About this RNA
Structure probing data (2A3 and DMS) for a 207-nucleotide construct. The reactions ran in a buffer of 150 mM KOAc, 10 mM MgCl2 and 150 mM bicine (pH 8.5), at 24 C. The DMS profile rests on 2,005 reads. Values cover nucleotides 27 to 156. 2A3 adducts were read by reverse transcription with SuperScript II with manganese. For DMS the reverse transcriptase was MarathonRT.
[RMDB]
RNA sequence: GGGAACGACUCGAGUAGAGUCGAAAAGCCGCGGCAAGUGGAGUUAGCGAGAAGAGACUAGGCUUUGGUUUCUUCAAGUGAAGCGGUCACAAAUCAGGUGUGGUAGUUACCGUAAAAAAUCCGGAUUAAUGCCUCAGCGCGUUCGCGCGCUGAGGAAGAGAAAUGGUAUGUUCGCAUACCAUUUCUCAAAAGAAACAACAACAACAAC
Reactivity to 2A3 in 0.01 (KOAc 150mM, MgCl2 10mM, bicine 150mM(pH8.5), 24C), signal-to-noise 3, nucleotides 027 to 156: g010c020c000g040c040g010g040c130a140a100g040u070g070g060a080g020u200u080a020g040c010g020a040g020a040a010g000a000g000a000c010u040a050g070g220c020u190u120u100g030g000u020u030u010c000u020u000c030a060a030g010u030g040a030a010g010c000g020g020u060c030a000c020a030a140a040u100c040a020g010g080u050g020u050g110g020u010a040g040u090u050a010c020c000g040u080a050a060a030a030a030a090u050c010c020g010g020a050u070u100a110a090u190g030c000c000u020c000a000g000c000g020c000g020u060u080c170g000c000g000c000g000c060u010g000a000g000g000a000a000
Reactivity to DMS in 0.01 (KOAc 150mM, MgCl2 10mM, bicine 150mM(pH8.5), 24C), signal-to-noise 1, nucleotides 027 to 156: g010c000c010g010c070g000g000c050a020a170g010u000g000g020a080g010u010u000a180g010c020g000a300g000a090a080g000a040g000a020c000u010a080g030g010c150u000u010u020g010g010u010u000u000c000u010u000c020a010a300g020u010g000a130a230g020c020g010g000u000c050a120c080a080a090a110u000c090a080g040g030u000g020u010g000g030u010a150g000u000u000a050c030c000g020u020a010a080a040a080a060a090u030c050c030g010g000a300u000u010a050a150u010g020c000c000u000c000a000g010c000g010c060g040u010u020c280g020c010g130c000g010c000u010g000a000g000g000a010a010